[RMDB]
RNA sequence: GGGAACGACUCGAGUAGAGUCGAAAAGCCCUAUCAUCUUUUGAUGGUAGUAUCUAGGACUACCAUGGUUGCAACGGGUAACGGGCAAUCAGGGUUCGAUUCCGGAGAGGGAGCCUGAGAAACGGCUUGCAUAAUCAAUGUUCGCAUUGAUUAUGCAAAAAGAAACAACAACAACAAC
Reactivity to 2A3 in 0.01 (KOAc 150mM, MgCl2 10mM, bicine 150mM(pH8.5), 24C), signal-to-noise 8, nucleotides 027 to 126: g050c010c000c010u000a030u010c010a000u000c020u040u300u170u300g020a010u000g020g000u000a000g040u010a070u040c060u050a100g040g030a010c000u010a030c020c010a030u010g020g000u010u020g010c070a300a280c120g030g020g050u170a180a040c010g000g040g000c000a000a010u010c000a020g010g000g010u060u100c060g020a090u080u040c010c000g050g010a060g010a040g060g060g010a010g000c000c000u040g030a050g040a040a120a010c120g010g000c000u000
Reactivity to DMS in 0.01 (KOAc 150mM, MgCl2 10mM, bicine 150mM(pH8.5), 24C), signal-to-noise 5, nucleotides 027 to 126: g020c010c010c000u000a040u000c020a020u000c000u010u030u020u040g010a010u000g010g020u000a010g020u020a050u020c050u000a080g000g000a080c060u000a030c020c010a040u000g000g010u000u000g000c010a050a150c030g010g000g040u040a130a180c030g030g010g010c010a010a010u000c000a030g000g000g000u010u010c140g000a070u020u000c020c000g020g000a050g010a110g000g010g010a050g010c000c000u010g000a170g000a070a100a140c110g000g000c010u010

Structure probing data (2A3 and DMS) for a 177-nucleotide construct. Reactivities are given for positions 27 through 126. The RNA was probed in 150 mM KOAc, 10 mM MgCl2 and 150 mM bicine (pH 8.5) at 24 C. The data come from the RNA Mapping Database (RMDB), libraries RFM100 and RFMREP.